[RMDB]
RNA sequence: GGGAACGACUCGAGUAGAGUCGAAAAGCCACGCUAUUCGUAGCGUGGCGGUUAAGAUCUAGACAAAAACUCACAAAAAGUCUAGAUCAAAUAAAGUCAGAACGGUCCGGGAUUUCGAUCCCGGAAAGACCUAUAGUGAAUUCGUUCACUAUAGGUCAAAAGAAACAACAACAACAAC
Reactivity to DMS in 0.01 (KOAc 150mM, MgCl2 10mM, bicine 150mM(pH8.5), 24C), signal-to-noise 5, nucleotides 027 to 126: g010c010c000a020c010g020c000u000a040u010u010c210g030u000a000g000c010g060u000g000g010c000g000g000u010u000a100a160g010a000u000c000u000a000g000a020c010a070a100a100a100a130c130u010c150a100c170a080a090a080a130a120g000u010c000u000a000g000a000u000c000a030a080a040u010a060a100a110g000u010c100a090g010a100a090c140g010g000u000c000c000g000g000g010a020u000u000u010c150g000a030u000c000c000c000g010g010a000a020a060
Reactivity to 2A3 in 0.01 (KOAc 150mM, MgCl2 10mM, bicine 150mM(pH8.5), 24C), signal-to-noise 3, nucleotides 027 to 126: g010c000c000a010c010g010c000u030a040u040u100c190g120u020a000g000c010g010u010g010g000c000g000g010u070u030a080a010g000a000u000c000u000a010g010a010c020a000a210a030a090a090c090u150c060a100c060a050a120a030a040a020g010u010c000u000a000g010a000u010c000a000a000a000u050a000a010a000g160u050c060a040g040a230a070c060g120g030u000c000c020g000g000g000a010u040u010u150c160g040a010u000c010c050c000g010g000a000a000a000
The record gives the reactivity of an RNA of 177 nucleotides to DMS and 2A3. For 2A3, 3,520 sequencing reads were counted. DMS (dimethyl sulfate) methylates the pairing face of unpaired adenines and cytosines. For DMS the reverse transcriptase was MarathonRT. The RNA was probed in 150 mM KOAc, 10 mM MgCl2 and 150 mM bicine (pH 8.5) at 24 C.